[RMDB]
RNA sequence: GGGAACGACUCGAGUAGAGUCGAAAACGAUCCUCGGUGAACGCAAUUUCCGAGGGUAGCGGCACGCCCAUCGCCUCGGCGAUCUGCACGCCGAACAGGCCCUUACCCUUGCGUUGCUCGCCAAUCACCGCUACACUGUAUUCGUACAGUGUAGCGGAAAAGAAACAACAACAACAAC
Reactivity to 2A3 in 0.01 (KOAc 150mM, MgCl2 10mM, bicine 150mM(pH8.5), 24C), signal-to-noise 1, nucleotides 027 to 126: c050g050a100u060c010c040u040c080g020g000u060g020a150a050c080g010c040a040a040u110u070u120c060c020g010a010g000g000g020u020a010g020c070g030g000c020a030c120g070c000c010c010a070u080c070g090c000c030u010c030g030g010c010g050a160u040c050u150g050c100a010c010g020c020c000g010a020a040c080a050g150g020c000c010c000u010u070a040c010c000c020u000u020g040c020g040u030u000g020c040u040c030g020c010c000a010a060u090c040a030
Reactivity to DMS in 0.01 (KOAc 150mM, MgCl2 10mM, bicine 150mM(pH8.5), 24C), signal-to-noise 2, nucleotides 027 to 126: c290g000a110u000c010c010u010c120g010g040u010g010a080a120c230g030c130a070a090u010u000u010c160c040g010a000g020g020g000u000a010g000c230g010g000c050a110c140g010c020c120c000a080u000c100g000c070c080u010c150g000g010c010g010a050u010c110u000g010c070a160c080g010c000c010g000a040a120c030a130g000g000c010c020c030u010u010a030c030c040c030u000u000g010c230g010u000u000g000c000u010c010g000c040c040a060a120u020c100a110

The data come from the RNA Mapping Database (RMDB), library OK2TST. Structure probing data (2A3 and DMS) for a 177-nucleotide construct. DMS adducts were read by reverse transcription with MarathonRT. For 2A3 the reverse transcriptase was SuperScript II with manganese. The DMS profile rests on 1,394 reads. High 2A3 reactivity points to a flexible backbone, as in loops and unpaired stretches.